This 177-nucleotide RNA was probed chemically with 2A3 and DMS. The DMS profile rests on 2,109 reads. It was measured as part of the RMDB library TTRDES. The RNA was probed in 150 mM KOAc, 10 mM MgCl2 and 150 mM bicine (pH 8.5) at 24 C. Reactivities are rounded to 0.1 and cut off at 0 and 3.
[RMDB]
RNA sequence: GGGAACGACUCGAGUAGAGUCGAAAAGAUAUGGACGUUACACUCGACGAUCGUAGGCAUCGGAAACGAUGUUACGGGAGAGUGUUACGUCCUAAGUCAAAUCAACCGCACUUCGGUGCGGUUGAAACACAGCCCAAUUGUUCGCAAUUGGGCUGUGAAAAGAAACAACAACAACAAC
Reactivity to 2A3 in 0.01 (KOAc 150mM, MgCl2 10mM, bicine 150mM(pH8.5), 24C), signal-to-noise 1, nucleotides 027 to 126: g010a000u010a000u050g000g000a010c030g000u010u030a000c040a010c000u070c030g300a300c030g030a170u010c010g000u020a030g000g250c010a000u000c000g020g000a000a010a000c000g000a010u010g000u040u020a010c010g000g000g010a050g010a000g000u010g000u000u000a000c000g000u010c000c010u010a000a000g000u010c000a000a030a180u020c000a000a010c000c010g030c000a000c000u080u100c300g160g000u030g000c000g000g010u030u000g010a000a000a010
Reactivity to DMS in 0.01 (KOAc 150mM, MgCl2 10mM, bicine 150mM(pH8.5), 24C), signal-to-noise 1, nucleotides 027 to 126: g010a020u000a010u000g000g000a020c010g020u000u000a030c000a010c000u010c010g010a130c300g000a040u000c000g020u000a010g020g020c000a000u000c000g030g000a000a020a030c000g030a000u010g000u000u000a000c000g000g000g000a000g000a030g020u000g010u000u000a020c010g020u000c000c010u000a000a050g010u010c000a120a160a290u010c000a000a010c000c000g010c000a010c010u000u000c220g030g010u000g000c000g000g000u000u000g010a010a060a190